[RMDB]
Chemical mapping of a 177-nucleotide RNA with 2A3 and DMS.
The data come from the RNA Mapping Database (RMDB), library M2PK50.
High 2A3 reactivity points to a flexible backbone, as in loops and unpaired stretches.
DMS adducts were read by reverse transcription with MarathonRT.
Conditions: 150 mM KOAc, 10 mM MgCl2 and 150 mM bicine (pH 8.5), 24 C.
2A3 adducts were read by reverse transcription with SuperScript II with manganese.

RNA sequence: GGGAACGACUCGAGUAGAGUCGAAAACCACCGCAAUUCGUUGCGGUGGGAAGGUGCAAUUCGCUGUCUGCACCACACACGGCCAAUCCGUCAAAGCGAAAACUGGAGGGUCAUUCGUGACCCUCAAAUUCAUACUCCCGUUCGCGGGAGUAUGAAUAAAAGAAACAACAACAACAAC
Reactivity to 2A3 in 0.01 (KOAc 150mM, MgCl2 10mM, bicine 150mM(pH8.5), 24C), signal-to-noise 2, nucleotides 027 to 126: c000c000a010c000c020g030c010a010a030u080u090c190g030u130u010g020c020g000g000u000g000g000g020a030a040g000g000u020g010c020a050a100u090u050c020g000c030u040g050u060c050u030g000c000a000c040c010a000c000a010c000a010c000g090g000c050c050a030a090u060c010c000g030u090c090a110a060a000g020c020g050a010a030a040a070c090u140g130g000a000g000g020g030u020c020a010u050u100c140g080u010g000a000c000c020c000u010c000a010a000
Reactivity to DMS in 0.01 (KOAc 150mM, MgCl2 10mM, bicine 150mM(pH8.5), 24C), signal-to-noise 3, nucleotides 027 to 126: c000c010a000c000c000g010c000a020a020u000u010c210g010u000u010g020c000g040g010u000g000g010g000a060a030g000g010u000g000c020a050a130u000u010c040g000c040u000g050u010c080u010g010c000a030c000c010a110c110a120c110a050c040g000g010c130c110a050a090u020c020c020g000u000c100a050a180a050g020c030g000a060a040a120a050c140u000g010g010a030g000g020g010u000c000a040u000u020c180g000u000g030a010c000c000c010u000c010a000a030